[RMDB]
RNA sequence: GGGAACGACUCGAGUAGAGUCGAAAAAGGGUCUGAUAACACUGCCAGCUUAGAGCCCUUGGUUCAGUGGAGGUGGGAGAGCCUCUCUCUCUAACCGGCAGAAAGAGCUGUUUUUUCUGCUGCAGGAACCUGACGCAGCAGGAGCUCGGAGGCUGGCUGACAAAUAUCGUUUCGACGAUAUUUGUCAAAAAGAAACAACAACAACAAC
Reactivity to DMS in 0.01 (KOAc 150mM, MgCl2 10mM, bicine 150mM(pH8.5), 24C), signal-to-noise 1, nucleotides 027 to 156: a030g020g000g010u010c010u000g030a100u000a070a040c020a070c120u010g050c000c000a050g000c040u000u000a120g000a060g010c020c010c020u000u010g020g030u000u000c030a080g030u000g010g010a050g090g000u000g020g000g000a090g010a100g010c110c040u000c110u000c030u020c000u010c020u000a100a170c080c000g000g000c020a060g000a040a050a040g020a000g030c140u010g020u000u000u010u010u000u010c020u010g020c000u000g020c010a200g010g000a130a100c030c030u010g000a080c090g010c060a110g030c010a030g030g010a040g000c050u000c030g010g000a160g000g030c010u000g020g050c010
Reactivity to 2A3 in 0.01 (KOAc 150mM, MgCl2 10mM, bicine 150mM(pH8.5), 24C), signal-to-noise 2, nucleotides 027 to 156: a010g030g000g000u020c030u020g060a120u110a270a040c100a040c130u070g000c010c000a020g020c030u060u140a010g010a000g040c040c000c000u040u030g060g020u060u070c080a040g030u060g150g040a150g010g050u070g030g040g030a080g000a020g030c050c010u070c010u000c010u000c010u000c010u020a060a010c010c050g030g000c010a010g060a010a030a000g080a010g020c150u150g280u080u060u000u010u020u000c000u000g010c000u010g010c030a060g000g140a030a020c000c030u030g040a030c030g010c060a050g000c000a010g040g020a040g000c020u020c000g060g040a030g000g000c000u010g000g060c020